Chemical mapping of a 177-nucleotide RNA with DMS and 2A3. DMS adducts were read by reverse transcription with MarathonRT. For 2A3, 3,453 sequencing reads were counted. The reactions ran in a buffer of 150 mM KOAc, 10 mM MgCl2 and 150 mM bicine (pH 8.5), at 24 C. For DMS, 1,520 sequencing reads were counted. Values cover nucleotides 27 to 126.

RNA sequence: GGGAACGACUCGAGUAGAGUCGAAAAGAUAUGGAUCGAGUACGAGCGAAGAACUACCUCGGAAACGAGGUAGGGAGCUUUGUACCGAUCCUAAGUCAAAAGUAACCAAUCUUCGGAUUGGUUACAACAGUCUAACAUGCUUCGGCAUGUUAGACUGAAAAGAAACAACAACAACAAC
Reactivity to DMS in 0.01 (KOAc 150mM, MgCl2 10mM, bicine 150mM(pH8.5), 24C), signal-to-noise 2, nucleotides 027 to 126: g020a060u020a300u020g010g000a000u000c000g010a100g000u000a000c000g030a020g020c020g020a030a250g030a130a180c010u000a000c000c010u020c010g000g000a160a110a200c020g010a000g000g030u000a010g010g000g000a070g040c010u000u000u020g030u000a010c000c010g000a000u020c020c000u000a000a030g000u000c040a090a090a150a110g000u000a000a020c000c000a010a010u000c010u000u030c240g000g000a000u000u000g010g000u000u000a000c000a070a170
Reactivity to 2A3 in 0.01 (KOAc 150mM, MgCl2 10mM, bicine 150mM(pH8.5), 24C), signal-to-noise 2, nucleotides 027 to 126: g030a010u050a030u150g030g010a000u000c000g000a130g080u000a010c040g010a030g080c080g230a300a040g000a030a110c000u000a010c000c000u000c000g010g040a060a080a060c010g000a000g000g000u000a000g000g000g000a000g010c000u110u260u300g010u000a000c000c010g000a000u000c000c000u030a030a020g040u000c040a100a000a000a150g000u000a000a000c010c010a000a020u000c000u000u110c290g040g000a000u000u010g000g000u000u000a000c030a010a000